[RMDB]
RNA sequence: GGGAACGACUCGAGUAGAGUCGAAAAAAUUAGAGGCAAUUUGAAAUAAUUUAAAUUAGCUCGACCCUACUGCACUUACCGAACUAGAUAACGGUGUAGUAGGGGUAAAUUCUCCGCAUUCGGUGCGCAACCACCUGAGGUUUCGACCUCAGGUGAACCCAUAGUCUAGGUUCGCCUAGACUAUGGGAAAAGAAACAACAACAACAAC
Reactivity to 2A3 in 0.01 (KOAc 150mM, MgCl2 10mM, bicine 150mM(pH8.5), 24C), signal-to-noise 2, nucleotides 027 to 156: a000a000u150u080a050g000a030g060g060c010a000a000u050u000u040g050a090a130a030u250a080a180u170u100u070a110a030a020u010u010a020g010c010u010c010g000a020c000c010c000u000a000c000u000g010c000a000c000u020u040a020c070c030g030a090a050c040u060a110g080a190u100a280a040c100g000g000u000g010u020a010g000u000a000g000g000g000g010u010a020a000a000u030u000c050u020c030c000g010c020a020u030u080c100g080g000u000g010c010g010c060a100a090c060c010a000c000c010u000g010a000g000g020u000u090u120c160g110a100c010c010u000c000a000g000g010u000g000a000a000